Description
An RNA of 177 nucleotides, treated with 2A3 and DMS and read out base by base. DMS adducts were read by reverse transcription with MarathonRT. 2A3 is a SHAPE reagent: it acylates the 2'-hydroxyl of flexible nucleotides of all four kinds. 2A3 adducts were read by reverse transcription with SuperScript II with manganese. It was measured as part of the RMDB library M2PK50. The RNA was probed in 150 mM KOAc, 10 mM MgCl2 and 150 mM bicine (pH 8.5) at 24 C.
RNA sequence: GGGAACGACUCGAGUAGAGUCGAAAACGAGAGCGAUUCGUCGCUCUCGAAAGAGUGCACGGCAGGACAAGAAAAGCCGAAGAAAAGCAGAGCCGACUGCAAAAACUCCCAUGUUCGCAUGGGAGAACCAAUUAUAGCUGUUCGCAGCUAUAAUUGGAAAAGAAACAACAACAACAAC
Reactivity to 2A3 in 0.01 (KOAc 150mM, MgCl2 10mM, bicine 150mM(pH8.5), 24C), signal-to-noise 3, nucleotides 027 to 126: c010g000a000g010a000g020c010g000a020u040u070c220g040u000c000g080c000u000c000u000c000g000a000a000a010g060a030g050u140g020c040a010c070g010g000c020a030g080g070a110c040a080a120g090a140a180a020a020g030c020c030g020a060a020g070a040a140a030a020g000c000a000g020a040g050c000c100g150a150c010u030g000c040a030a030a010a080a160c010u010c010c010c000a000u020g030u030u050c210g000c120a000u020g000g000g000a000g000a000a000
Reactivity to DMS in 0.01 (KOAc 150mM, MgCl2 10mM, bicine 150mM(pH8.5), 24C), signal-to-noise 3, nucleotides 027 to 126: c030g020a010g000a000g000c010g000a020u000u010c260g040u000c000g010c000u000c000u000c000g000a030a040a080g010a110g030u010g010c100a110c050g020g020c040a110g000g010a130c110a100a130g000a070a100a120a130g000c030c010g010a080a100g000a060a100a090a150g000c020a020g010a170g040c040c090g010a140c070u000g000c010a090a100a070a110a090c000u010c000c000c000a010u000g010u000u010c230g000c000a010u000g000g000g010a000g000a020a060